[RMDB]
An RNA of 207 nucleotides, treated with 2A3 and read out base by base. Values cover nucleotides 27 to 156. The data come from the RNA Mapping Database (RMDB), library M2RFPK. For 2A3 the reverse transcriptase was SuperScript II with manganese. The reactions ran in a buffer of 150 mM KOAc, 10 mM MgCl2 and 150 mM bicine (pH 8.5), at 24 C.

RNA sequence: GGGAACGACUCGAGUAGAGUCGAAAAGUCCCCAGUAUGACGUUAAACUGCUGACUCACACAUACUGACACCGGUUGCUCAACAGGCUGUGUGGGACAAUAGAAUAACAAGGCUGUCAAUUUGAGCUAAAACUCCUCGGGGUUCGCCCCGAGGAGAACCACCUCCUUUAGUUCGCUAAAGGAGGUGGAAAAGAAACAACAACAACAAC
Reactivity to 2A3 in 0.01 (KOAc 150mM, MgCl2 10mM, bicine 150mM(pH8.5), 24C), signal-to-noise 1, nucleotides 027 to 156: g000u010c000c010c010c000a000g010u040a050u150g010a000c060g040u070u050a030a030a020c010u000g040c020u010g000a030c000u020c000a000c000a000c010a020u060a030c000u080g080a060c010a050c080c050g170g030u160u210g010c030u010c030a030a100c000a070g020g000c000u000g000u000g000u000g000g000g010a010c010a000a090u050a030g160a050a050u130a140a010c020a080a040g150g000c050u070g100u120c010a040a050u070u030u110g030a020g010c010u040a030a000a060a090c010u000c000c000u000c000g000g000g000g000u000u060c090g090c030c000c000c000g000a000g000g000a000g000a000a000